[RMDB]
RNA sequence: GGGAACGACUCGAGUAGAGUCGAAAACUGCAUCACCUGAUCACUGAUGGCCCAACGGUAUCCGGCGGUACAACUGAAUACUUGUAGCUGCCUUUUGAGCGGGUUGGCUGCAAUCCGAAACGGAGAGAAAACCUAAUUACGUUCGCGUAAUUAGGAAGAAAUAGUCUGCGUUCGCGCAGACUAUUUCAAAAGAAACAACAACAACAAC
Reactivity to 2A3 in 0.01 (KOAc 150mM, MgCl2 10mM, bicine 150mM(pH8.5), 24C), signal-to-noise 1, nucleotides 027 to 156: c040u050g000c030a060u040c020a000c000c000u020g030a050u080c040a020c060u020g020a020u090g120g000c000c020c010a050a020c010g050g000u060a080u040c010c020g080g010c020g000g050u040a020c020a090a050c180u160g080a110a110u130a180c060u000u040g000u030a010g030c000u020g000c000c000u010u040u100u130g110a060g000c010g000g000g060u130u230g070g050c000u040g000c000a010a020u030c070c000g000a230a100a130c060g090g000a110g000a010g000a010a100a030a020c000c000u000a000a000u000u000a000c010g020u040u030c200g000c000g080u000a000a000u000u000a000g000g010a010a010
About this RNA
An RNA of 207 nucleotides, treated with 2A3 and read out base by base. The data come from the RNA Mapping Database (RMDB), library M2RFPK. Conditions: 150 mM KOAc, 10 mM MgCl2 and 150 mM bicine (pH 8.5), 24 C.